Chemical mapping of a 207-nucleotide RNA with 2A3.
2A3 adducts were read by reverse transcription with SuperScript II with manganese.
Values cover nucleotides 27 to 156.

RNA sequence: GGGAACGACUCGAGUAGAGUCGAAAAUUCCAUUUGAGUAUCCUGAAAACGGGCUUUUCAGCAUGGAACGUACAUAUUAAAUAGUAGGAGUGCAUAGUGGCCCGUACAGCAGGCAUUAACAUUCCUGAAAACGUGAAAAGGUUCGCCUUUUCACGAAGAAUCGUCAUCUGUUCGCAGAUGACGAUUCAAAAGAAACAACAACAACAAC
Reactivity to 2A3 in 0.01 (KOAc 150mM, MgCl2 10mM, bicine 150mM(pH8.5), 24C), signal-to-noise 1, nucleotides 027 to 156: u030u040c000c000a000u130u090u080g040a040g000u070a020u090c010c000u020g080a050a050a000a000c000g010g000g000c000u080u110u190u090c070a010g000c020a040u030g050g050a160a020c020g070u040a000c060a050u120a040u210u290a210a240a180u200a000g000u000a050g010g200a050g000u000g000c000a070u110a180g210u060g000g020c010c000c010g050u000a000c000a000g050c010a000g000g050c000a000u020u000a040a070c000a080u000u140c020c000u060g030a110a100a050a080c010g020u000g000a000a000a000a000g010g030u010u060c190g110c000c000u000u010u000u000c000a000c000g000a000a000